The record gives the reactivity of an RNA of 177 nucleotides to DMS and 2A3. For DMS the reverse transcriptase was MarathonRT. The RNA was probed in 150 mM KOAc, 10 mM MgCl2 and 150 mM bicine (pH 8.5) at 24 C. For 2A3, 21,648 sequencing reads were counted.

RNA sequence: GGGAACGACUCGAGUAGAGUCGAAAAGAUAUGGACGUGGACAUGAUUGGGAGUCGGAAACGACUCCUGAUCAACAGCCACAGUCCUAAGUCAAACGAUUCGAUACGGUUCGCCGUAUCGAAUCGAACUACCGUUUAUAGUUCGCUAUAAACGGUAGAAAAGAAACAACAACAACAAC
Reactivity to DMS in 0.01 (KOAc 150mM, MgCl2 10mM, bicine 150mM(pH8.5), 24C), signal-to-noise 6, nucleotides 027 to 126: g010a040u010a300u010g000g020a020c010g010u000g000g010a060c070a230u000g000a010u000u010g010g000g010a020g000u000c000g010g000a100a070a180c010g010a010c000u000c000c000u000g010a000u000c000a020a060c280a160g000c000c000a010c010a100g020u000c000c000u010a020a100g000u010c040a100a100a280c020g000a010u000u000c000g000a010u010a000c000g000g000u000u010c260g020c000c000g010u010a000u000c000g000a000a000u000c000g010a040a130
Reactivity to 2A3 in 0.01 (KOAc 150mM, MgCl2 10mM, bicine 150mM(pH8.5), 24C), signal-to-noise 4, nucleotides 027 to 126: g030a030u090a050u160g000g000a000c010g010u000g000g020a050c040a220u090g010a010u020u020g010g000g000a000g010u000c000g020g040a050a080a030c010g000a000c000u000c000c000u000g000a010u000c000a000a010c050a010g020c010c000a010c070a010g000u000c000c000u020a110a020g090u050c080a100a030a120c030g000a000u000u000c000g000a000u000a010c010g020g080u040u080c300g030c110c000g000u000a000u000c010g000a000a000u000c000g000a010a010

It was measured as part of the RMDB library TTRDEL.